[RMDB]
RNA sequence: GGGAACGACUCGAGUAGAGUCGAAAAAGUGUAUGAAGUACGUAGAGUGUCGGCAAGCUCUAUAUAUGGACACUUACGAUGGGUUUUGGUUGUUUUGUAUCUCAAGCCGACUUUGAGUAUUUGAGGAAAAAGACUUACGCCUUCGGGCGUAAGUCAAGCAAGGAUUAUACUUCGGUAUAAUCCUUGCAAAAGAAACAACAACAACAAC
Reactivity to 2A3 in 0.01 (KOAc 150mM, MgCl2 10mM, bicine 150mM(pH8.5), 24C), signal-to-noise 1, nucleotides 027 to 156: a000g090u100g000u050a200u120g030a080a000g020u030a010c050g000u010a030g000a010g050u020g040u050c020g050g050c100a080a120g000c030u000c020u000a040u000a000u000a010u090g120g030a000c020a000c000u000u030a040c070g060a130u110g030g030g000u060u030u140u140g000g050u000u020g010u000u030u010u040g030u020a070u060c020u000c030a010a010g010c020c010g010a060c060u060u130u120g080a050g040u050a060u100u080u070g060a040g030g010a080a040a000a050a030g000a000c000u000u000a000c000g000c020c000u040u040c210g070g000g000c020g000u000a010a000g000u000c000a000a000